[RMDB]
RNA sequence: GGGAACGACUCGAGUAGAGUCGAAAACUGUAACUUUACCCAGAAAUAUGGGCGUCUUCCGUGCUGCUUGUUGGGGAACUUAGGUUCUCUCCUCUCCGAGGAGGUGUCGUGCGUGCGGGAGGCGACCGGUAGAGCAUCUUUUCGAAGAUGCUCUACCAAAAGAAACAACAACAACAAC
Reactivity to DMS in 0.01 (KOAc 150mM, MgCl2 10mM, bicine 150mM(pH8.5), 24C), signal-to-noise 1, nucleotides 027 to 126: c060u030g010u010a030a090c090u020u020u000a130c010c000c000a090g030a070a070a160u060a090u080g000g000g000c010g000u000c020u000u000c030c000g000u020g010c000u040g060c020u000u000g000u030u020g020g010g000g000a030a010c000u010u020a120g030g000u000u010c000u000c000u000c000c010u020c010u080c140c060g030a070g030g020a010g020g010u070g000u000c040g010u030g010c050g000u000g000c000g000g000g000a010g000g030c000g000a010c100c040
Reactivity to 2A3 in 0.01 (KOAc 150mM, MgCl2 10mM, bicine 150mM(pH8.5), 24C), signal-to-noise 5, nucleotides 027 to 126: c020u050g070u200a120a060c060u100u090u200a110c020c010c000a030g120a040a200a020u300a130u130g010g020g000c020g000u000c000u000u000c000c020g000u010g010c020u090g010c010u090u260g080u140u200g100g010g000g000a000a000c010u060u060a170g170g000u030u000c020u000c000u030c010c000u030c000u020c070c190g090a130g060g000a010g010g040u090g080u080c090g020u040g000c010g000u010g000c000g000g000g000a000g010g000c000g000a000c000c000

The record gives the reactivity of an RNA of 177 nucleotides to DMS and 2A3. For DMS, 2,392 sequencing reads were counted. DMS (dimethyl sulfate) methylates the pairing face of unpaired adenines and cytosines. The RNA was probed in 150 mM KOAc, 10 mM MgCl2 and 150 mM bicine (pH 8.5) at 24 C.